RNA sequence: GGGAACGACUCGAGUAGAGUCGAAAAAGAAGCCAUCCCUAGCUGAAAGGGAGCGCGUUAUCCGAAAGACCGUGGAGGCAUAUGCUUCCGUAAAAACUUCUUGCCCCACGGUUGCAAGAUCUGGCUCAGUGAUGCGUAAUUUCGAUUACGCAUCACUAAAAGAAACAACAACAACAAC
Reactivity to DMS in 0.01 (KOAc 150mM, MgCl2 10mM, bicine 150mM(pH8.5), 24C), signal-to-noise 3, nucleotides 027 to 126: a080g010a080a060g020c020c040a170u010c010c000c020u010a100g030c210u030g010a080a140a050g000g010g010a030g000c200g030c080g010u010u010a060u020c070c000g000a060a110a070g010a040c000c020g000u000g000g010a140g040g010c000a070u020a030u030g020c170u000u000c210c040g070u030a000a030a010a050a070c080u000u000c090u000u020g030c020c000c010c060a010c000g000g010u000u000g000c130a130a050g000a060u000c040u010g010g040c060u010c110
Reactivity to 2A3 in 0.01 (KOAc 150mM, MgCl2 10mM, bicine 150mM(pH8.5), 24C), signal-to-noise 4, nucleotides 027 to 126: a000g100a020a000g010c010c030a050u010c000c000c010u040a120g090c140u150g140a140a090a020g020g000g000a010g020c040g000c030g030u040u100a070u020c030c020g090a110a070a020g020a000c000c000g020u000g010g010a190g030g000c020a010u060a020u140g070c100u110u110c040c010g010u110a020a040a070a040a030c040u050u040c040u120u030g000c000c000c000c000a000c000g000g020u000u020g000c010a000a030g000a020u040c040u120g030g010c030u030c080
The record gives the reactivity of an RNA of 177 nucleotides to DMS and 2A3. Values are in units of 0.01, from 0 to 300, in steps of 10. For DMS the reverse transcriptase was MarathonRT. For 2A3 the reverse transcriptase was SuperScript II with manganese.